[RMDB]
RNA sequence: GGGAACGACUCGAGUAGAGUCGAAAAGAAGCAGUCCUUAUUGUGUGUGAUGUUUAGUCAUCGCACUGUCCCUACGGGCUGCCAACGUAGGUCCAAUGUGCCGAGAGGCACUAGAAGUACGGCUUAUUAUGAUGCAUCGCCGUACCAACGAUGCUGAAUUUAAAUCAUACUUCGGUAUGAUUUAAAUAAAAGAAACAACAACAACAAC
Reactivity to 2A3 in 0.01 (KOAc 150mM, MgCl2 10mM, bicine 150mM(pH8.5), 24C), signal-to-noise 8, nucleotides 027 to 156: g120a050a010g000c000a000g010u010c010c000u100u120a190u230u230g090u020g000u000g010u010g040a010u000g090u040u170u200a210g100u180c010a000u000c000g000c000a000c000u010g080u040c010c010c000u020a030c040g000g010g000c000u000g000c000c010a070a020c050g050u060a030g000g080u010c030c030a070a070u110g000u000g000c000c010g020a030g020a030g030g000c000a000c000u010a030g030a120a010g030u050a020c010g010g000c020u070u040a050u130u080a120u280g160a050u140g030c030a030u050c040g010c020c010g020u020a030c000c000a050a030c030g020a020u050g010c010u020g020a010
Reactivity to DMS in 0.01 (KOAc 150mM, MgCl2 10mM, bicine 150mM(pH8.5), 24C), signal-to-noise 6, nucleotides 027 to 156: g020a090a080g020c010a020g010u000c010c010u000u020a110u000u000g020u000g000u000g030u010g020a020u000g020u000u010u010a210g020u000c000a020u000c010g020c000a020c010u010g010u000c010c010c010u000a170c150g010g020g020c020u000g030c020c060a050a050c050g010u000a030g010g010u000c020c030a100a210u000g020u000g020c010c010g010a300g010a300g020g020c000a010c000u000a070g010a060a070g000u010a040c050g010g010c060u000u010a100u000u000a130u000g000a200u000g000c020a040u000c040g000c000c030g020u000a100c070c010a040a030c010g000a030u000g010c000u010g010a130

This 207-nucleotide RNA was probed chemically with 2A3 and DMS. It was measured as part of the RMDB library OK3TST. The reactions ran in a buffer of 150 mM KOAc, 10 mM MgCl2 and 150 mM bicine (pH 8.5), at 24 C.